[RMDB]
RNA sequence: GGGAACGACUCGAGUAGAGUCGAAAAGGCGACCGAAGCGAGGGGGAAAGCAAAGAAAGCAACGGGGCUAGCGGGUGGAUGUUCCACCCCCCGGCGGGGCCGAGUGAGGCUUAUCCCGGGGAUCGGCCACCGAAUAUACGUUCGCGUAUAUUCGGUGAAAAGAAACAACAACAACAAC
Reactivity to 2A3 in 0.01 (KOAc 150mM, MgCl2 10mM, bicine 150mM(pH8.5), 24C), signal-to-noise 1, nucleotides 027 to 126: g060g000c030g050a050c000c010g030a060a000g040c010g040a050g000g030g000g000g010a100a040a010g030c060a090a070a080g070a030a170a020g080c010a020a090c020g000g020g020g020c060u040a010g090c030g010g000g000u010g000g030a100u150g100u190u000c000c000a010c000c000c000c000c000c000g040g000c060g070g050g010g020c010c020g000a030g060u200g050a050g010g020c020u030u030a110u120c000c000c000g000g010g020g000a060u050c040g020g000c010
Reactivity to DMS in 0.01 (KOAc 150mM, MgCl2 10mM, bicine 150mM(pH8.5), 24C), signal-to-noise 2, nucleotides 027 to 126: g020g000c080g020a080c080c060g010a070a140g000c050g010a080g020g000g010g010g010a070a060a090g010c120a090a100a130g000a090a060a160g000c060a040a060c070g000g030g010g000c110u000a070g010c060g060g000g010u000g010g010a100u010g000u000u000c000c000a080c030c030c000c030c000c020g010g000c160g000g000g000g000c030c000g010a080g020u000g010a150g020g010c010u010u000a070u000c120c020c010g000g000g000g000a030u010c020g000g020c110
Structure probing data (2A3 and DMS) for a 177-nucleotide construct. Reactivities are given for positions 27 through 126. For DMS, 1,331 sequencing reads were counted. Conditions: 150 mM KOAc, 10 mM MgCl2 and 150 mM bicine (pH 8.5), 24 C.